[RMDB]
RNA sequence: GGGAACGACUCGAGUAGAGUCGAAAAGGGCUAGCCGUCAGGUGUUCCACCCCCCGAGAGGGUACGAGUGAGGCUUAUCCCGGGGAACUCGGCGAAUCGUCCCCACAUAGCAGUUCCCAGGACCCCCAUCGGCGCGAGUUCGCUCGCGCCAAAAGAAACAACAACAACAAC
Reactivity to 2A3 in 0.01 (KOAc 150mM, MgCl2 10mM, bicine 150mM(pH8.5), 24C), signal-to-noise 1, nucleotides 027 to 129: g030g000g000c040u020a010g040c000c000g030u000c030a020g000g060u040g050u040u030c030c000a040c000c000c000c000c000c000g050a000g000a030g040g030g000u040a020c050g010a050g030u050g000a040g010g020c000u010u080a100u050c000c030c050g000g000g000g000a020a000c050u000c030g060g040c020g040a080a070u060c080g010u030c000c000c090c000a000c010a060u100a010g000c010a000g020u000u000c000c000c000a000g010g000a070c000c000c000c000c000a010u130c040
Reactivity to DMS in 0.01 (KOAc 150mM, MgCl2 10mM, bicine 150mM(pH8.5), 24C), signal-to-noise 2, nucleotides 027 to 129: g050g000g000c140u010a040g000c030c010g120u070c080a050g000g050u010g020u040u000c000c000a090c010c000c000c000c000c000g000a030g010a090g000g000g060u050a040c080g000a150g010u030g000a110g000g000c080u000u000a110u010c070c040c000g030g030g000g040a070a120c060u000c060g050g000c020g000a140a080u010c040g010u040c030c020c080c050a060c050a060u070a060g010c100a110g000u000u000c000c000c000a110g000g060a150c060c000c050c000c020a010u100c110
Source: RMDB library 15KLIB, as collected in RNAgym. Chemical mapping of a 170-nucleotide RNA with 2A3 and DMS. High 2A3 reactivity points to a flexible backbone, as in loops and unpaired stretches. For DMS, 4,994 sequencing reads were counted. The RNA was probed in 150 mM KOAc, 10 mM MgCl2 and 150 mM bicine (pH 8.5) at 24 C. Reactivities are given for positions 27 through 129.